[RMDB]
RNA sequence: GGGAACGACUCGAGUAGAGUCGAAAAUCACUUGAUACAGCCAAUGAUGACUUGGGCAAGGGGGUAGACCAAGGGCUGGAGGGCUUCGCUGGGGCCCGCAGUGCUCAGGACCCGGCACCACAGGAAGCUACUAAAAAGCGUUCGCGCUUUUUAGUAGAAAAGAAACAACAACAACAAC
Reactivity to DMS in 0.01 (KOAc 150mM, MgCl2 10mM, bicine 150mM(pH8.5), 24C), signal-to-noise 3, nucleotides 027 to 126: u010c030a090c070u010u010g000a140u000a100c100a080g000c030c030a070a130u010g000a070u010g010a130c070u000u000g020g010g000c070a080a070g000g000g010g020g030u010a110g000a120c060c020a050a140g000g020g010c030u010g000g000a140g020g010g010c060u000u000c120g030c090u000g000g020g010g010c050c000c030g010c090a050g010u000g000c050u000c040a080g020g000a120c010c000c040g010g020c020a080c050c060a060c090a070g010g010a060a100g000
Reactivity to 2A3 in 0.01 (KOAc 150mM, MgCl2 10mM, bicine 150mM(pH8.5), 24C), signal-to-noise 1, nucleotides 027 to 126: u020c010a030c070u070u110g040a010u070a180c020a040g040c020c000a090a070u090g030a090u070g000a080c020u030u060g010g000g000c040a040a060g090g040g040g010g010u050a060g030a060c000c000a030a030g080g000g000c040u020g040g040a120g030g070g010c040u120u130c120g050c110u060g000g040g010g000c030c000c030g000c010a030g060u050g060c020u040c070a010g000g000a020c000c000c000g030g000c040a050c060c010a060c000a020g030g080a010a050g040
The data come from the RNA Mapping Database (RMDB), library OK2TST.
An RNA of 177 nucleotides, treated with DMS and 2A3 and read out base by base.
2A3 adducts were read by reverse transcription with SuperScript II with manganese.
DMS adducts were read by reverse transcription with MarathonRT.